Record summary: An RNA of 177 nucleotides, treated with DMS and 2A3 and read out base by base.
RNA sequence: GGGAACGACUCGAGUAGAGUCGAAAAGCUCUGCCAUUAAUAGACCACAACUCACAUUUGUGAAGAAUUUUAUUACUGCCAAUCCGGCAUGGAGUAAGGCAGUCUUUAUUUCGCCUUACAAUUCACACACAAUCCGUUAGUUCGCUAACGGAUUGUGAAAAGAAACAACAACAACAAC
Reactivity to DMS in 0.01 (KOAc 150mM, MgCl2 10mM, bicine 150mM(pH8.5), 24C), signal-to-noise 1, nucleotides 027 to 126: g030c080u000c000u010g060c010c020a020u000u000a080a100u000a060g010a030c070c010a030c090a050a120c100u000c060a120c140a180u000u000u000g020u000g000a100a070g010a070a070u000u020u000u000a060u000u010a120c050u010g000c010c000a080a130u010c130c100g010g050c090a030u020g010g020a120g010u010a000a050g010g020c000a040g010u000c070u000u000u000a100u010u010u000c140g000c010c010u000u010a040c150a060a110u000u000c040a090c110a200
Reactivity to 2A3 in 0.01 (KOAc 150mM, MgCl2 10mM, bicine 150mM(pH8.5), 24C), signal-to-noise 2, nucleotides 027 to 126: g030c000u000c020u030g030c000c010a000u080u070a030a080u000a190g020a030c010c010a020c020a060a060c000u050c030a050c020a110u030u140u150g000u030g000a050a140g010a040a040u090u170u010u090a060u090u150a090c020u000g000c050c000a090a100u090c100c030g000g000c040a020u110g030g020a090g000u020a010a010g020g000c010a010g000u000c000u030u090u050a120u020u120u050c040g000c020c000u000u100a000c000a040a070u100u040c030a030c020a000
Conditions: 150 mM KOAc, 10 mM MgCl2 and 150 mM bicine (pH 8.5), 24 C. It was measured as part of the RMDB library 15KREP. For DMS the reverse transcriptase was MarathonRT. 2A3 adducts were read by reverse transcription with SuperScript II with manganese. The 2A3 profile rests on 975 reads.